[RMDB]
RNA sequence: GGGAACGACUCGAGUAGAGUCGAAAAUCACCGACGCACAGGCGACGGCCCUCGAGCAGCGUGGGAAGAGCCGGGCUCGUCGAGUGGAUCACACAUUUCGAGGCGCUCUCGUGUAUCGAGCGGCACAACAAACCCGAUUUUUCGAAAUCGGGUUUGUAAAAGAAACAACAACAACAAC
Reactivity to 2A3 in 0.01 (KOAc 150mM, MgCl2 10mM, bicine 150mM(pH8.5), 24C), signal-to-noise 1, nucleotides 027 to 126: u010c010a000c120c020g000a010c040g050c010a100c030a110g090g000c040g080a110c060g150g000c020c010c000u050c040g120a100g070c130a040g090c040g040u040g000g060g060a080a070g050a020g010c090c010g050g090g020c100u090c050g020u030c000g000a090g020u000g000g060a070u060c010a020c000a020c010a080u000u040u160c050g020a070g050g050c030g000c040u010c020u010c060g090u150g020u030a140u200c060g010a020g000c070g000g030c010a010c010a140
Reactivity to DMS in 0.01 (KOAc 150mM, MgCl2 10mM, bicine 150mM(pH8.5), 24C), signal-to-noise 2, nucleotides 027 to 126: u000c030a080c000c000g010a070c050g030c220a110c150a180g000g010c020g020a140c270g000g000c010c020c000u000c010g010a210g050c220a150g000c040g030u000g000g000g000a040a050g010a300g000c030c010g000g070g010c100u000c020g000u000c040g000a060g050u000g010g010a100u000c050a090c060a130c080a120u000u000u000c020g000a090g010g000c030g020c030u000c020u000c030g020u010g000u000a100u010c050g000a060g000c090g000g000c030a030c030a180